[RMDB]
RNA sequence: GGGAACGACUCGAGUAGAGUCGAAAAACUGGAAGUGAGAAUUGGAGGAAAACAAACUGAUUGCUGGUUGAUGCUUGCAACAGUGUGGCAAACAAUUAAUAUUCAGAUUGUUUUUCUCCAAUAUCUCGACAUACUACUGGUUCGCCAGUAGUAUGUCAAAAGAAACAACAACAACAAC
Reactivity to DMS in 0.01 (KOAc 150mM, MgCl2 10mM, bicine 150mM(pH8.5), 24C), signal-to-noise 2, nucleotides 027 to 126: a130c030u000g000g020a100a150g040u010g010a000g000a060a060u000u000g000g020a020g030g000a000a000a000a000c010a000a000a080c000u000g000a010u010u000g030c170u000g030g010u000u000g000a210u000g000c040u010u000g040c020a080a100c240a140g010u000g030u000g020g010c010a010a070a040c010a010a030u000u000a020a050u000a070u000u000c000a010g000a110u000u000g000u000u000u000u000u000c000u000c000c000a010a000u000a050u000c010u000c010
Reactivity to 2A3 in 0.01 (KOAc 150mM, MgCl2 10mM, bicine 150mM(pH8.5), 24C), signal-to-noise 3, nucleotides 027 to 126: a010c090u090g100g060a090a080g150u060g140a000g020a020a020u000u000g010g000a000g000g000a000a010a000a000c000a000a020a000c000u010g000a030u010u040g010c060u010g030g020u020u020g020a030u080g010c070u140u140g030c020a120a140c070a300g190u060g010u020g080g030c010a070a210a060c000a040a040u050u060a020a040u040a030u090u080c000a000g020a030u010u020g000u000u000u000u000u000c010u000c000c000a000a000u010a010u000c010u010c010

This 177-nucleotide RNA was probed chemically with DMS and 2A3. It was measured as part of the RMDB library RFMREP. DMS (dimethyl sulfate) methylates the pairing face of unpaired adenines and cytosines. For DMS the reverse transcriptase was MarathonRT. Values cover nucleotides 27 to 126.